[RMDB]
RNA sequence: GGGAACGACUCGAGUAGAGUCGAAAAGGAAACCGAAAAAAAUAUGAAAGGUUGCUGCAGAGUAUGGACUUACCCACUGAAUGGGAGGAUAUCAUCAACAAGAACCCGAUCAUCCUCUACAGGGCACCCCACCGAGAAUAUUCGUAUUCUCGGUGGGAAAAGAAACAACAACAACAAC
Reactivity to 2A3 in 0.01 (KOAc 150mM, MgCl2 10mM, bicine 150mM(pH8.5), 24C), signal-to-noise 1, nucleotides 027 to 126: g140g030a160a000a040c000c030g100a000a000a000a000a040a050a050u300a040u140g080a150a030a030g010g040u010u010g130c090u030g050c050a000g000a000g060u020a130u120g030g020a020c000u040u200a070c000c000c000a000c100u230g140a140a080u100g000g000g000a000g010g000a010u020a020u010c090a050u240c090a060a120c010a240a030g040a190a050c030c030c020g030a000u000c000a000u000c000c060u000c000u000a030c070a080g030g000g000c020a050c000
Reactivity to DMS in 0.01 (KOAc 150mM, MgCl2 10mM, bicine 150mM(pH8.5), 24C), signal-to-noise 2, nucleotides 027 to 126: g000g010a080a070a120c000c000g000a000a020a040a120a100a060a140u070a020u030g030a110a190a070g000g010u000u010g000c000u000g000c050a060g000a080g000u010a040u000g010g010a120c090u000u090a100c020c010c000a030c130u000g070a020a180u000g000g000g000a030g020g000a010u000a040u000c000a190u000c200a100a100c200a120a090g030a040a170c110c130c000g000a040u010c040a010u000c000c000u000c000u040a040c010a110g000g030g010c240a070c230
The record gives the reactivity of an RNA of 177 nucleotides to 2A3 and DMS. DMS (dimethyl sulfate) methylates the pairing face of unpaired adenines and cytosines. For DMS the reverse transcriptase was MarathonRT. The DMS profile rests on 1,436 reads.